[RMDB]
RNA sequence: GGGAACGACUCGAGUAGAGUCGAAAAGUGUCGAACUCGGUGGUUACCGCGCCGAGCUUACUGUUGGCCGACGGGCGGCGGUGAAUUGCCAACGCCCGCAAUAUGGUGCGGAUGGAUGGCCCGUUCGGAAUAGGAGCAUUUUCGAAUGCUCCUAUUCAAAAGAAACAACAACAACAAC
Reactivity to DMS in 0.01 (KOAc 150mM, MgCl2 10mM, bicine 150mM(pH8.5), 24C), signal-to-noise 5, nucleotides 027 to 126: g010u000g020u000c060g020a050a060c020u000c040g010g030u000g010g030u000u000a100c110c070g000c020g010c010c010g000a070g030c040u000u000a080c180u010g010u010u010g000g010c030c040g020a150c020g010g000g010c000g010g020c300g020g020u000g000a100a100u010u010g020c000c010a030a300c020g000c020c010c000g010c050a030a070u010a100u010g010g010u000g020c020g000g010a060u000g010g010a100u000g010g000c000c010c050g000u000u000c040g010
Reactivity to 2A3 in 0.01 (KOAc 150mM, MgCl2 10mM, bicine 150mM(pH8.5), 24C), signal-to-noise 3, nucleotides 027 to 126: g130u070g080u080c020g040a050a000c020u020c050g020g030u110g030g040u110u060a050c040c020g020c000g000c020c020g020a040g010c000u030u130a070c040u060g170u300u110g040g010c050c030g050a110c010g020g000g010c010g000g010c040g030g000u090g110a300a250u190u300g000c000c000a000a010c000g000c000c000c020g000c000a020a020u140a110u210g100g030u060g000c000g030g020a040u010g080g060a070u010g030g010c040c000c010g000u020u020c010g050